[RMDB]
RNA sequence: GGGAACGACUCGAGUAGAGUCGAAAAGAUAUGGAUUUGUUGUCAGCAGGGAGAAGAGCGUUGAAACUACGAUCGGAAACGAUCGUAGUGGAGCUCGUAACCUGCUUGGAUUUACAAAUCCUAAGUCCUAAAUAUAAGAGUUCGCUCUUAUAUUUAGAAAAGAAACAACAACAACAAC
Reactivity to 2A3 in 0.01 (KOAc 150mM, MgCl2 10mM, bicine 150mM(pH8.5), 24C), signal-to-noise 1, nucleotides 027 to 126: g070a030u170a070u300g000g000a000u000u000u040g020u010u030g010u030c000a010g000c020a000g040g050g030a020g000a070a000g000a000g000c020g210u300u030g000a040a010a010c000u000a000c010g010a020u030c010g030g040a120a070a040c030g010a000u010c000g010u000a000g000u000g000g000a010g000c000u000c000g000u020a000a000c000c010u000g000c000u010u010g000g000a000u130u190u220a020c010a000a000a020u000c010c000u010a140a010g040u000c000
Reactivity to DMS in 0.01 (KOAc 150mM, MgCl2 10mM, bicine 150mM(pH8.5), 24C), signal-to-noise 3, nucleotides 027 to 126: g010a100u010a280u010g010g010a010u000u000u000g000u000u010g000u000c010a040g000c000a020g000g010g020a160g010a130a220g000a010g010c000g020u000u000g020a220a170a020c000u000a010c000g010a010u000c000g020g000a160a100a200c010g010a000u000c010g000u000a000g010u000g000g000a110g000c000u000c000g000u010a090a240c000c000u000g010c000u000u000g020g000a010u000u000u010a020c000a010a010a010u000c000c000u000a050a120g000u010c030
Overview: The record gives the reactivity of an RNA of 177 nucleotides to 2A3 and DMS. For DMS the reverse transcriptase was MarathonRT. It was measured as part of the RMDB library TTRINS. Conditions: 150 mM KOAc, 10 mM MgCl2 and 150 mM bicine (pH 8.5), 24 C.